Chemical mapping of a 177-nucleotide RNA with DMS. For DMS, 1,435 sequencing reads were counted. Reactivities are rounded to 0.1 and cut off at 0 and 3. DMS adducts were read by reverse transcription with MarathonRT.

RNA sequence: GGGAACGACUCGAGUAGAGUCGAAAAGUUUCUUUCUAAUUGGGCGAGGGUUAGUUGCUUUGACUGAGCUAAUUGUUUAAUGCGAGAAAUUAAGGUCAUUUCAAGUCCUCCUUGUGUUUUCCGUUUGCAACUGUUACCUGUUCGCAGGUAACAGUUGAAAAGAAACAACAACAACAAC
Reactivity to DMS in 0.01 (KOAc 150mM, MgCl2 10mM, bicine 150mM(pH8.5), 24C), signal-to-noise 1, nucleotides 027 to 126: g010u020u000u010c010u000u000u010c090u010a070a120u010u000g020g010g020c040g000a080g020g000g010u010u000a060g040u000u010g000c050u010u000u010g030a060c060u000g010a090g010c090u000a040a140u000u000g010u000u000u000a060a070u000g020c020g010a090g010a080a040a070u000u000a050a160g000g030u000c040a030u000u000u000c060a010a040g000u000c080c030u010c030c020u000u000g010u000g010u010u000u000u000c010c030g000u000u000u010g010